[RMDB]
RNA sequence: GGGAACGACUCGAGUAGAGUCGAAAAACGGAAUCAAGGUUAACUUCAAAAUCCGUCACAACAUUGAGGAUGGAAGCGUUCAGUUGGCUGAUCACUACCAACAGAAUACUCCAAUUGGCGAUGGCCCCCUGUUACGUAUGUUCGCAUACGUAACAGGAAAAGAAACAACAACAACAAC
Reactivity to 2A3 in 0.01 (KOAc 150mM, MgCl2 10mM, bicine 150mM(pH8.5), 24C), signal-to-noise 9, nucleotides 027 to 126: a000c030g010g040a040a040u180c140a070a070g090g020u180u230a110a140c040u130u080c080a040a070a030a100u010c020c000g040u050c030a040c020a100a090c020a040u030u080g020a040g070g040a060u030g020g020a090a060g040c050g050u020u030c020a080g000u010u010g050g000c070u090g100a210u180c060a080c250u140a040c010c000a010a020c000a020g010a010a020u030a060c020u000c010c000a040a140u040u050g150g000c020g010a020u020g040g020c000c000c010
Reactivity to DMS in 0.01 (KOAc 150mM, MgCl2 10mM, bicine 150mM(pH8.5), 24C), signal-to-noise 3, nucleotides 027 to 126: a020c030g020g000a040a050u030c290a080a120g000g000u020u070a060a150c000u000u010c120a090a070a070a020u000c000c010g000u010c070a100c150a060a170c100a030u010u020g000a100g030g000a060u000g000g000a010a010g020c030g060u000u010c010a070g010u010u000g000g040c150u010g000a070u020c290a070c110u030a170c020c000a020a000c010a070g000a000a050u010a080c000u000c000c020a020a060u000u010g020g000c000g000a030u000g000g000c010c000c010
Structure probing data (2A3 and DMS) for a 177-nucleotide construct. For 2A3, 9,798 sequencing reads were counted. Reactivities are rounded to 0.1 and cut off at 0 and 3. 2A3 adducts were read by reverse transcription with SuperScript II with manganese. DMS adducts were read by reverse transcription with MarathonRT.